The data come from the RNA Mapping Database (RMDB), library M2PK50.
This 177-nucleotide RNA was probed chemically with DMS and 2A3.
The 2A3 profile rests on 1,440 reads.
[RMDB]
RNA sequence: GGGAACGACUCGAGUAGAGUCGAAAAGAACCGCGAUUCGUCGCGGUUCGAGCGCCGUAGCGCGCAACGGCGUAACGGCAGCAUUAGCGCGCAGCUGCGGACGAUCGGGUGGUUUCGACCACCCGAAUACUUCUGAAGACUUCGGUCUUCAGAAGUAAAAAGAAACAACAACAACAAC
Reactivity to DMS in 0.01 (KOAc 150mM, MgCl2 10mM, bicine 150mM(pH8.5), 24C), signal-to-noise 3, nucleotides 027 to 126: g000a010a000c000c010g020c000g010a050u000u010c170g020u010c010g040c000g000g000u000u000c000g020a080g010c130g030c000c000g030u000a040g000c010g000c030g020c000a050a110c300g000g000c000g010u000a120a100c240g000g000c040a130g030c040a100u000u000a170g010c130g000c030g040c030a140g010c060u000g000c020g000g000a050c080g010a140u000c000g000g010g030u000g000g000u000u000u000c190g010a000c010c000a020c000c000c010g000a000a020
Reactivity to 2A3 in 0.01 (KOAc 150mM, MgCl2 10mM, bicine 150mM(pH8.5), 24C), signal-to-noise 1, nucleotides 027 to 126: g000a000a000c000c000g050c000g010a020u020u010c160g010u020c000g130c060g020g000u000u000c000g010a000g000c060g010c000c000g000u030a030g030c000g040c000g000c040a070a030c020g060g030c040g060u070a100a030c010g130g030c100a040g000c030a100u050u170a030g030c000g000c010g000c120a060g000c020u040g000c030g050g010a100c060g020a070u060c010g000g020g000u020g010g000u010u070u130c170g030a010c000c000a010c010c020c020g000a000a000

High DMS reactivity at an A or C suggests that its Watson-Crick edge is free. The DMS profile rests on 2,326 reads.